[RMDB]
RNA sequence: GGGAACGACUCGAGUAGAGUCGAAAACGUGAGCUGGUUCAACGGAAAGCUCGAGAAGAAGGGUGAGUUUACCCUAUACCGUUUGAUACGCUUCAUAAGGGCCAAGAGGCCCGACAUAGUUGCAAAACCUACUGGUGCAUUUCGAUGCACCAGUAGGAAAAGAAACAACAACAACAAC
Reactivity to 2A3 in 0.01 (KOAc 150mM, MgCl2 10mM, bicine 150mM(pH8.5), 24C), signal-to-noise 1, nucleotides 027 to 126: c030g000u030g000a030g000c090u110g070g080u110u030c000a000a080c010g000g000a130a060a000g020c030u080c070g040a070g030a030a000g020a010a020g020g050g010u070g080a210g160u000u030u260a000c000c000c000u020a000u000a010c000c000g010u010u020u070g090a100u100a030c070g000c010u010u030c010a030u000a290a200g010g030g000c070c040a220a060g190a280g230g050c100c030c010g020a000c030a040u080a040g000u010u030g000c000a050a090a020a070
Reactivity to DMS in 0.01 (KOAc 150mM, MgCl2 10mM, bicine 150mM(pH8.5), 24C), signal-to-noise 2, nucleotides 027 to 126: c100g020u040g060a010g000c010u000g010g040u010u000c060a030a050c040g030g000a080a160a070g040c020u000c010g000a130g010a140a200g010a290a040g010g010g040u000g010a240g010u000u000u020a030c000c010c020u010a050u000a100c070c010g030u000u020u000g030a180u000a160c150g020c010u000u010c030a010u030a110a300g000g000g020c000c040a050a220g040a240g000g040c000c000c030g020a040c170a070u010a070g010u000u010g010c070a100a070a070a030